[RMDB]
RNA sequence: GGGAACGACUCGAGUAGAGUCGAAAACGCUGGGAUUAUGCGUCUGACAUGAAGAAGACUGAAGCGCGCACGGUCUACCUUCAACAGCAGACGCCGCUAAUCCUGUGCUGAAGCGCGCACGGCAACCGAAAGGUGCGACAUCCAUCGUUCGCGAUGGCAUACAACGGACAUUCGUGUCCGUUGUAUGAAAAGAAACAACAACAACAAC
Reactivity to 2A3 in 0.01 (KOAc 150mM, MgCl2 10mM, bicine 150mM(pH8.5), 24C), signal-to-noise 5, nucleotides 027 to 156: c050g000c010u030g000g010g000a000u000u000a020u190g010c010g010u000c000u010g120a220c040a250u190g010a000a000g010a010a010g000a000c000u020g030a230a080g000c000g000c000g010c010a010c020g000g000u000c010u040a170c050c010u030u020c080a300a220c050a150g010c000a000g000a000c000g000c000c000g010c000u000a000a000u000c000c000u020g040u060g000c040u120g040a090a020g000c010g000c000g000c010a020c040g080g030c050a160a190c010c010g060a100a030a030g040g010u020g020c020g040a040c030a100u050c010c000a000u000c000g090u140u090c210g020c030g130a010u020g000g010
Reactivity to DMS in 0.01 (KOAc 150mM, MgCl2 10mM, bicine 150mM(pH8.5), 24C), signal-to-noise 2, nucleotides 027 to 156: c100g000c030u000g020g030g020a030u010u000a020u000g000c010g010u000c000u010g000a060c030a240u000g010a020a010g020a300a040g010a040c000u010g010a000a080g000c020g030c000g030c020a300c040g010g030u000c000u000a070c120c000u020u000c020a100a120c180a080g020c000a010g000a050c000g050c020c030g010c000u000a020a050u000c000c000u030g000u020g000c020u010g000a110a040g010c070g000c010g010c010a190c030g020g000c070a100a140c030c000g010a090a230a190g010g020u000g000c070g010a180c030a070u000c010c010a020u000c010g050u000u000c250g040c010g020a020u010g020g000

About this RNA: Conditions: 150 mM KOAc, 10 mM MgCl2 and 150 mM bicine (pH 8.5), 24 C. Chemical mapping of a 207-nucleotide RNA with 2A3 and DMS. It was measured as part of the RMDB library RNAMAK. For 2A3 the reverse transcriptase was SuperScript II with manganese.